[RMDB]
RNA sequence: GGGAACGACUCGAGUAGAGUCGAAAAAGAGGGGAAAAGAAGAGCUAGAGCAAUGGUUACGGAAUGGUAGCAAUACCAUAUCGUGAUCUCUAAUGAGCGUCCUCAUACUGUCCAAGGUGUUCAACCACAGGUAUGUAAGAUUCGUCUUACAUACCUGAAAAGAAACAACAACAACAAC
Reactivity to DMS in 0.01 (KOAc 150mM, MgCl2 10mM, bicine 150mM(pH8.5), 24C), signal-to-noise 9, nucleotides 027 to 126: a070g010a070g010g000g000g000a050a060a080a110g010a100a080g000a120g010c030u000a050g010a090g010c300a100a060u030g000g010u000u000a010c000g000g000a050a010u000g000g010u000a000g000c290a090a130u000a000c000c000a010u000a010u000c000g000u000g000a010u000c000u000c090u010a070a080u030g000a050g010c050g000u010c010c010u010c030a060u020a110c060u010g000u010c020c030a090a090g000g010u010g010u000u000c050a050a050c040c040a180
Reactivity to 2A3 in 0.01 (KOAc 150mM, MgCl2 10mM, bicine 150mM(pH8.5), 24C), signal-to-noise 9, nucleotides 027 to 126: a000g070a050g020g040g020g040a070a100a030a040g170a080a030g040a020g040c030u060a010g010a010g080c070a100a180u200g010g010u010u010a000c000g000g030a020a010u000g000g000u000a010g010c030a040a030u000a010c000c000a000u010a050u010c000g000u000g010a010u010c030u000c030u090a110a120u170g050a030g020c020g020u030c000c000u010c000a030u120a090c050u070g050u040c030c010a050a060g030g000u040g030u060u100c050a060a030c010c010a020